RNA sequence: GGGAACGACUCGAGUAGAGUCGAAAAAUGGCUAUUCCUACUUCUGAGGAUUGGAAGAAACUACAACAAGAUGUUGAACAAUAUGGUUUAUAUCAUGCAUAUAGAUUAGCAAUUGCUCCAACACAAAAAAGAGGGAGGUAUUCGUACCUCCCUCUUUAAAAGAAACAACAACAACAAC
Reactivity to DMS in 0.01 (KOAc 150mM, MgCl2 10mM, bicine 150mM(pH8.5), 24C), signal-to-noise 3, nucleotides 027 to 126: a110u000g020g000c090u010a120u000u010c000c000u000a150c100u010u000c150u040g020a120g000g010a120u010u020g030g000a090a040g000a070a040a060c130u020a080c120a140a110c140a050a130g030a060u010g050u000u010g010a070a160c000a030a010u010a060u000g000g000u000u000u000a010u010a000u010c040a100u060g000c160a040u000a080u000a000g000a040u000u000a110g000c160a070a060u000u010g000c150u020c080c010a000a010c040a030c080a000a060a040
Reactivity to 2A3 in 0.01 (KOAc 150mM, MgCl2 10mM, bicine 150mM(pH8.5), 24C), signal-to-noise 1, nucleotides 027 to 126: a010u020g070g030c010u100a170u160u100c000c000u020a130c020u100u070c010u050g120a150g070g130a240u000u230g080g040a030a000g030a030a090a000c070u230a050c040a140a000c040a290a000g100a070u080g010u000u010g000a000a000c000a010a010u010a000u000g020g110u000u120u080a020u000a000u000c040a080u260g060c050a000u000a000u000a010g010a020u050u000a000g030c110a000a070u040u000g000c050u150c060c000a050a000c000a000c020a000a260a070